[RMDB]
Chemical mapping of a 177-nucleotide RNA with DMS and 2A3. 2A3 adducts were read by reverse transcription with SuperScript II with manganese. Source: RMDB library M2PK50, as collected in RNAgym. The 2A3 profile rests on 4,853 reads. The reactions ran in a buffer of 150 mM KOAc, 10 mM MgCl2 and 150 mM bicine (pH 8.5), at 24 C.
RNA sequence: GGGAACGACUCGAGUAGAGUCGAAAAGAAGACUAGUUCGCUAGUCUUCAAAAGAGCUAGCAAUGUUCAGCUAGCAAAGAUCGAAAGAUCAAAUGAACUAAAAAACCAUCGACUUCGGUCGAUGGAAGAUGUAACAUGUCUUCGGACAUGUUACAUCAAAAGAAACAACAACAACAAC
Reactivity to DMS in 0.01 (KOAc 150mM, MgCl2 10mM, bicine 150mM(pH8.5), 24C), signal-to-noise 2, nucleotides 027 to 126: g020a030a000g010a010c010u010a000g020u000u020c260g040c000u000a020g000u000c000u000u010c000a030a050a100a140g030a200g030c000u000a000g010c000a060a110u020g020u010u000c010a110g000c000u000a000g020c000a020a030a130g010a010u010c000g000a090a070a140g020a010u000c010a020a040a050u000g010a000a020c030u000a000a080a040a070a100a110c000c000a000u000c000g010a030c000u010u000c200g010g030u000c000g000a000u000g000g000a030a010
Reactivity to 2A3 in 0.01 (KOAc 150mM, MgCl2 10mM, bicine 150mM(pH8.5), 24C), signal-to-noise 3, nucleotides 027 to 126: g020a000a000g000a000c000u000a010g010u020u080c070g010c100u000a010g010u000c000u000u000c000a010a000a000a000g060a010g010c010u000a000g000c020a070a220u140g050u060u040c020a020g000c000u000a000g000c010a020a080a010g010a000u020c010g020a060a030a020g020a000u010c010a000a010a040u080g030a020a010c020u140a060a150a040a030a020a070c010c000a000u000c000g000a010c000u030u060c240g080g000u000c010g000a010u000g010g000a000a000